An RNA of 177 nucleotides, treated with 2A3 and DMS and read out base by base. It was measured as part of the RMDB library OK1LIB. High DMS reactivity at an A or C suggests that its Watson-Crick edge is free.

[RMDB]
RNA sequence: GGGAACGACUCGAGUAGAGUCGAAAACAUUGCAUAUCGAAGUGCAUCAUGAGGUCUGAGAUUGAUGCACGUUGACAUGCGUGGUAUCACUUUCUUAUGCGAGAGUGAGAAGAUGAAACCACAUCACGUUAAUACUAUAAUUCGUUAUAGUAUUAACAAAAGAAACAACAACAACAAC
Reactivity to 2A3 in 0.01 (KOAc 150mM, MgCl2 10mM, bicine 150mM(pH8.5), 24C), signal-to-noise 9, nucleotides 027 to 126: c020a020u090u270g000c000a000u010a010u020c010g030a070a010g000u000g000c000a000u000c000a000u020g060a030g070g210u090c090u150g130a070g020a140u010u010g000a000u000g000c000a000c000g000u000u010g000a000c000a010u000g000c000g010u000g000g010u030a020u070c000a000c000u020u040u010c010u030u210a100u220g100c110g040a010g000a000g010u000g010a010g010a020a010g010a010u030g020a040a020a010c010c010a010c000a030u040c030a010c080
Reactivity to DMS in 0.01 (KOAc 150mM, MgCl2 10mM, bicine 150mM(pH8.5), 24C), signal-to-noise 5, nucleotides 027 to 126: c040a060u030u050g040c000a000u000a100u000c000g010a020a040g000u000g000c000a000u000c000a010u000g000a260g020g020u070c220u040g010a200g010a110u000u010g000a010u000g010c000a000c000g000u010u000g000a010c060a010u010g010c000g000u000g000g010u000a080u000c000a000c010u000u010u000c000u000u020a090u040g010c180g010a050g000a060g010u000g000a010g010a100a050g000a030u000g000a050a110a090c010c010a070c010a090u030c100a100c200